[RMDB]
RNA sequence: GGGAACGACUCGAGUAGAGUCGAAAAAAGUGGCUAUCAAAGCGGAGGAUUAUGCCACAGAGGCGCUGGCAUGGCUGAUCGAAGAUAGUGUGGUGGCCGCGAUUAAUGUCCGUGCGCACAUUAUCGAAGCAUGCAUAUUAUUCGUAAUAUGCAUGCUAAAAGAAACAACAACAACAAC
Reactivity to 2A3 in 0.01 (KOAc 150mM, MgCl2 10mM, bicine 150mM(pH8.5), 24C), signal-to-noise 6, nucleotides 027 to 126: a000a020g070u060g010g000c010u030a010u140c080a100a080a040g070c060g020g030a030g020g010a030u070u050a050u280g000c000c000a010c010a010g050a050g030g020c040g000c060u030g030g010c030a070u070g030g000c030u040g030a060u060c050g060a050a020g020a070u060a030g040u040g020u040g060g170u060g100g030c010c000g020c040g000a020u050u180a130a060u180g040u030c020c020g040u090g020c010g020c010a010c010a020u020u040a030u060c020g010a010
Reactivity to DMS in 0.01 (KOAc 150mM, MgCl2 10mM, bicine 150mM(pH8.5), 24C), signal-to-noise 7, nucleotides 027 to 126: a090a070g030u000g000g000c010u000a080u000c060a070a070a100g020c060g010g010a120g000g000a060u000u000a060u010g010c020c010a030c090a090g000a130g010g010c040g020c060u000g010g010c030a070u000g000g010c070u000g000a080u000c070g010a110a110g010a050u000a050g020u000g020u000g000g020u000g020g020c030c030g010c090g000a070u000u000a080a050u010g010u000c020c010g010u010g010c030g010c030a020c030a030u000u000a030u010c040g000a140